Conditions: 150 mM KOAc, 10 mM MgCl2 and 150 mM bicine (pH 8.5), 24 C. This 177-nucleotide RNA was probed chemically with DMS and 2A3. For DMS, 1,808 sequencing reads were counted.
RNA sequence: GGGAACGACUCGAGUAGAGUCGAAAAAGACUUGGAGGAACCAUAAUAAAACUGUGGAUAACUUACUAAAGUCUUAGGAGGAACUUGGUCAUAGUUGAUAUUGAAUAGAGAGAACAAGUGUCUGGGAGAUAUGGUUGUUGUUCGCAACAACCAUAUCAAAAGAAACAACAACAACAAC
Reactivity to DMS in 0.01 (KOAc 150mM, MgCl2 10mM, bicine 150mM(pH8.5), 24C), signal-to-noise 3, nucleotides 027 to 126: a050g010a040c010u000u000g000g010a070g000g000a100a140c020c010a010u010a030a070u010a070a040a170a240c250u010g030u000g000g010a050u000a090a200c020u000u010a130c040u010a090a040a020g010u000c010u000u000a060g000g000a150g020g000a090a130c030u000u000g010g020u000c030a040u000a040g000u000u010g020a070u000a070u000u010g000a070a070u000a110g000a090g000a110g000a020a020c070a050a050g010u010g010u000c000u000g010g010g020a180
Reactivity to 2A3 in 0.01 (KOAc 150mM, MgCl2 10mM, bicine 150mM(pH8.5), 24C), signal-to-noise 2, nucleotides 027 to 126: a000g000a000c000u000u030g040g010a030g010g020a030a030c000c000a020u020a050a080u090a010a300a020a020c040u020g000u010g010g010a060u020a120a010c010u000u160a080c050u140a160a020a020g000u020c020u020u010a050g000g080a060g000g000a030a020c040u040u030g000g000u070c000a030u030a130g080u110u060g090a070u030a040u150u110g010a080a000u130a040g130a030g010a000g000a050a000c010a020a110g060u020g070u140c050u040g070g080g050a180

Reactivities are given for positions 27 through 126.
The 2A3 profile rests on 1,101 reads.